[RMDB]
RNA sequence: GGGAACGACUCGAGUAGAGUCGAAAACUCUGAAUGAGGUUGCGAAGGUCGAGGAGCAGGCCGUGAAGGCUCAGAUCUUCACCGACGUGUACGCGAAGAUCACGGCAGGAACCGACGAGUGGAACUCCCUGUAUUUCCGAUUCGUCGGAAAUACAGGAAAAGAAACAACAACAACAAC
Reactivity to DMS in 0.01 (KOAc 150mM, MgCl2 10mM, bicine 150mM(pH8.5), 24C), signal-to-noise 4, nucleotides 027 to 126: c030u000c020u020g010a130a120u010g000a110g030g000u000u000g010c070g010a100a150g010g020u000c070g020a090g010g000a070g020c060a150g000g000c010c010g010u000g000a120a130g000g000c010u000c090a150g000a090u000c020u000u000c020a060c050c050g000a160c100g000u000g000u000a050c090g030c070g000a100a110g000a060u000c030a070c040g010g000c030a090g010g010a100a080c030c030g000a070c060g000a040g020u010g000g010a040a160c090u000c070
Reactivity to 2A3 in 0.01 (KOAc 150mM, MgCl2 10mM, bicine 150mM(pH8.5), 24C), signal-to-noise 3, nucleotides 027 to 126: c030u040c030u080g110a090a080u140g010a070g050g010u020u050g060c040g060a070a030g030g000u100c090g030a050g010g010a020g030c030a040g060g030c000c010g030u080g100a160a060g010g010c030u030c050a060g010a090u000c000u010u000c000a010c030c000g030a050c010g040u090g050u110a050c060g030c060g150a070a000g020a080u050c020a010c060g030g010c080a060g020g080a030a010c000c000g020a030c020g010a020g000u030g020g030a030a040c020u020c000
The data come from the RNA Mapping Database (RMDB), library OK2TRN. Chemical mapping of a 177-nucleotide RNA with DMS and 2A3. For 2A3 the reverse transcriptase was SuperScript II with manganese. The DMS profile rests on 3,949 reads. DMS (dimethyl sulfate) methylates the pairing face of unpaired adenines and cytosines.